[RMDB]
RNA sequence: GGGAACGACUCGAGUAGAGUCGAAAAACGCUGGGAGACCGUGGAUAGAGAGGUACACGUGCGUACUGAAGCGCGCACGGUACGCAGUGUACUACCCACCUCUAUCGUAACAUCGGUCUCCUGUGCUGAAGCGCGCACGGCAACCGAAAGGUGCGAACGGAGACGAAGUGUUCGCACUUCGUCUCCGAAAAGAAACAACAACAACAAC
Reactivity to 2A3 in 0.01 (KOAc 150mM, MgCl2 10mM, bicine 150mM(pH8.5), 24C), signal-to-noise 1, nucleotides 027 to 156: a000c060g000c000u000g000g000g000a000g000a000c010c000g000u000g020g010a010u000a000g000a000g010a000g040g020u010a010c030a040c140g280u240g050c000g000u020a000c000u020g080a160a020g000c000g000c000g030c000a000c010g010g000u000a000c000g050c000a010g000u000g030u000a010c010u000a020c050c080c020a070c020c010u010c000u000a010u010c000g000u030a030a020c070a200u300c050g000g000u010c000u000c000c000u000g000u000g030c020u040g000a090a010g000c010g000c010g030c010a010c000g030g000c000a010a040c010c000g050a060a010a060g010g000u040g000c050g020a150a050
Structure probing data (2A3) for a 207-nucleotide construct. For 2A3, 1,425 sequencing reads were counted. The reactions ran in a buffer of 150 mM KOAc, 10 mM MgCl2 and 150 mM bicine (pH 8.5), at 24 C. It was measured as part of the RMDB library RNAMAK.